Annotation: The record gives the reactivity of an RNA of 207 nucleotides to 2A3. For 2A3 the reverse transcriptase was SuperScript II with manganese. It was measured as part of the RMDB library OK3TST.

RNA sequence: GGGAACGACUCGAGUAGAGUCGAAAAGGCGAGGAGUACGAGUACUGGUGGUUCGACGCGCGCGGCCUGUGGUUCCUCGCACCACGCGAGAUGCGCGCCGUUGGGCGUCGACUCAUGGGCUUCGCGUUCGACGGCAGCCAGAUCUACACCGGCGUCGCGCGGACGAAGUAUUCGUACUUCGUCCGCGAAAAGAAACAACAACAACAAC
Reactivity to 2A3 in 0.01 (KOAc 150mM, MgCl2 10mM, bicine 150mM(pH8.5), 24C), signal-to-noise 1, nucleotides 027 to 156: g000g010c000g000a010g000g000a000g000u000a010c060g000a000g010u060a040c050u050g300g040u130g070g070u160u100c060g020a280c010g050c030g000c090g010c000g120g110c020c060u030g010u040g030g010u020u160c010c000u000c000g000c010a140c130c070a100c130g010c030g000a070g000a060u230g100c050g010c010g050c140c000g000u070u070g060g000g000c010g030u160c050g040a000c000u000c050a090u160g030g010g010c000u060u010c000g000c020g000u010u000c000g000a010c030g020g000c030a020g020c010c000a040g000a050u060c010u060a010c000a050c000c020g170g020c000g020u010c010g000